An RNA of 177 nucleotides, treated with 2A3 and DMS and read out base by base. Reactivities are given for positions 27 through 126. Source: RMDB library OK2TRN, as collected in RNAgym. The 2A3 profile rests on 926 reads. For DMS the reverse transcriptase was MarathonRT.
RNA sequence: GGGAACGACUCGAGUAGAGUCGAAAAUUUAUAUUGGCAUUCGGCGCGAUUACCGCCGGGCAAGCAAGCGCCAUCUGUACCAUUGAUACAGAAAGCAAAGACGGUGGUUCUCUGCCAUCAACCAUGAAAUCAUGCUAUCGUUCGCGAUAGCAUGAUUAAAAGAAACAACAACAACAAC
Reactivity to 2A3 in 0.01 (KOAc 150mM, MgCl2 10mM, bicine 150mM(pH8.5), 24C), signal-to-noise 1, nucleotides 027 to 126: u020u020u000a250u090a090u120u060g030g000c010a020u110u160c040g000g050c000g020c080g020a070u000u180a020c010c010g060c000c060g050g080g000c000a010a040g020c000a080a110g060c000g000c050c070a070u010c000u030g000u000a040c000c000a240u010u280g030a070u140a110c010a020g000a040a050a000g000c000a070a070a060g100a040c030g010g000u000g040g030u020u000c110u020c030u020g020c020c010a040u010c060a000a070c010c020a010u090g100a020
Reactivity to DMS in 0.01 (KOAc 150mM, MgCl2 10mM, bicine 150mM(pH8.5), 24C), signal-to-noise 2, nucleotides 027 to 126: u060u010u060a090u000a090u030u010g010g050c060a080u010u010c090g020g020c000g050c120g000a090u010u030a030c030c010g010c040c010g010g010g030c080a140a140g020c160a090a170g000c090g040c020c020a260u030c000u000g020u000a030c030c090a190u010u010g030a080u020a000c040a020g000a080a190a180g040c030a080a100a100g000a100c080g000g030u020g020g000u010u000c060u010c060u020g010c010c020a040u000c130a030a210c020c020a090u000g010a170